[RMDB]
The record gives the reactivity of an RNA of 177 nucleotides to DMS and 2A3. 2A3 adducts were read by reverse transcription with SuperScript II with manganese. Source: RMDB library OK2TRN, as collected in RNAgym. The 2A3 profile rests on 1,252 reads. The reactions ran in a buffer of 150 mM KOAc, 10 mM MgCl2 and 150 mM bicine (pH 8.5), at 24 C.
RNA sequence: GGGAACGACUCGAGUAGAGUCGAAAAGCGCGAGCCUGGCACUGCGCAUCCUGGCGGCUCGGCUGCCGGAUUCCGGCGUCUACGUGUGCCACGCCCGCAACGCGCACGGCCACGCGCAGGCGGGGGCCUGCACCCGAGGAUUCGUCCUCGGGUGCAGAAAAGAAACAACAACAACAAC
Reactivity to DMS in 0.01 (KOAc 150mM, MgCl2 10mM, bicine 150mM(pH8.5), 24C), signal-to-noise 1, nucleotides 027 to 126: g020c050g000c000g000a070g050c020c070u030g020g000c030a090c040u000g010c040g030c010a110u000c040c020u000g010g000c030g000g000c000u020c120g010g010c000u000g010c000c010g020g030a120u010u010c060c040g020g010c020g030u010c100u000a130c190g010u000g020u000g010c020c020a090c260g000c000c040c020g030c060a090a060c090g000c030g020c070a070c160g020g000c070c030a080c040g020c000g020c130a080g000g010c010g000g000g000g000g000c140
Reactivity to 2A3 in 0.01 (KOAc 150mM, MgCl2 10mM, bicine 150mM(pH8.5), 24C), signal-to-noise 1, nucleotides 027 to 126: g050c090g020c030g060a020g070c030c030u110g030g060c010a010c120u040g010c040g000c010a040u030c010c010u030g000g030c010g000g000c080u080c150g080g010c050u040g040c010c000g060g010a230u250u070c070c060g050g030c000g040u020c060u170a150c090g130u110g020u040g060c030c000a010c030g090c000c030c040g090c030a020a100c080g000c010g000c030a040c080g060g000c020c010a040c060g020c020g080c010a000g090g050c060g000g010g010g000g000c000